[RMDB]
RNA sequence: GGGAACGACUCGAGUAGAGUCGAAAACUAUAGGGAAUAUAUUUCAAGACACCCAGUGGAUGUCUGAAACUGUGGAUAGUACCAAACCUGAUUGCCACCAAUCAUAACACAUUUCUGUAUUCCACUCACAACUUUAAUGUCUUUUCCAUCGUAACUAGGUACUGUAAAACUUCGGUUUUACAGUACCAAAAGAAACAACAACAACAAC
Reactivity to 2A3 in 0.01 (KOAc 150mM, MgCl2 10mM, bicine 150mM(pH8.5), 24C), signal-to-noise 3, nucleotides 027 to 156: c040u090a080u140a190g020g040g050a100a020u110a020u030a080u160u130u180c040a050a020g000a010c010a030c030c010c040a040g000u020g010g020a040u020g040u050c010u020g010a020a020a030c130u000g000u020g040g020a060u050a150g070u080a120c060c040a080a050a040c020c040u030g000a030u020u020g090c070c050a110c050c000a040a000u020c040a070u070a180a010c010a000c000a010u050u070u000c000u010g010u020a060u060u000c020c010a020c030u040c020a070c020a060a110c050u110u140u240a090a040u110g020u010c000u000u050u020u040c070c030a090u150c070g090u110a020a050c050u170a080
Reactivity to DMS in 0.01 (KOAc 150mM, MgCl2 10mM, bicine 150mM(pH8.5), 24C), signal-to-noise 1, nucleotides 027 to 156: c050u000a180u000a040g000g060g000a130a140u000a110u000a050u040u000u010c060a050a120g000a060c050a050c050c020c040a200g030u020g040g060a040u010g020u000c020u000g010a040a020a000c080u010g050u000g030g010a120u010a090g050u000a240c090c040a030a080a120c100c040u030g020a140u000u000g010c060c030a070c130c020a060a070u000c030a080u000a060a150c050a060c000a060u010u000u000c020u000g010u000a200u000u010c000c000a090c020u000c090a050c110a050a070c040u010u000u000a050a120u010g010u000c000u000u000u020u000c070c050a070u000c030g000u000a040a060c020u010a160
Background: This 207-nucleotide RNA was probed chemically with 2A3 and DMS. The DMS profile rests on 1,561 reads. High 2A3 reactivity points to a flexible backbone, as in loops and unpaired stretches. Conditions: 150 mM KOAc, 10 mM MgCl2 and 150 mM bicine (pH 8.5), 24 C. Source: RMDB library OK3TST, as collected in RNAgym.